[RMDB]
RNA sequence: GGGAACGACUCGAGUAGAGUCGAAAACGGCAUAUAUCGUAGCGCCGCGUAAUUAGCCGCGAUCGCGUACGUAUACGGCUAGCCGAUUAGCGCCGUAGCAUCGGCUAAUGCAUUACGCGUACGCGCGUCUUUGUCCGCGGUUCGCCGCGGACAAAGAAAAAGAAACAACAACAACAAC
Reactivity to DMS in 0.01 (KOAc 150mM, MgCl2 10mM, bicine 150mM(pH8.5), 24C), signal-to-noise 1, nucleotides 027 to 126: c020g020g030c000a250u020a120u010a100u000c050g010u000a070g050c050g020c230c020g000c040g030u000a080a110u000u000a180g020c020c030g000c060g000a100u000c050g000c010g010u000a010c000g020u000a030u000a040c280g000g020c020u000a000g010c010c060g020a000u000u000a060g010c020g030c180c200g090u020a210g020c040a060u010c000g000g050c000u000a010a170u030g030c010a050u000u000a040c150g000c000g000u010a020c020g010c000g030c130g020
Reactivity to 2A3 in 0.01 (KOAc 150mM, MgCl2 10mM, bicine 150mM(pH8.5), 24C), signal-to-noise 1, nucleotides 027 to 126: c040g030g000c080a060u090a030u020a020u300c030g030u040a050g060c010g000c060c020g000c020g060u010a060a110u090u110a050g010c030c020g080c000g050a060u120c020g030c000g010u000a010c050g030u040a040u000a090c090g020g000c040u020a010g000c000c000g000a020u120u140a140g030c050g090c160c120g100u010a080g010c010a000u000c000g020g000c000u030a150a000u250g000c070a020u070u070a010c040g000c000g040u000a010c000g000c020g000c020g000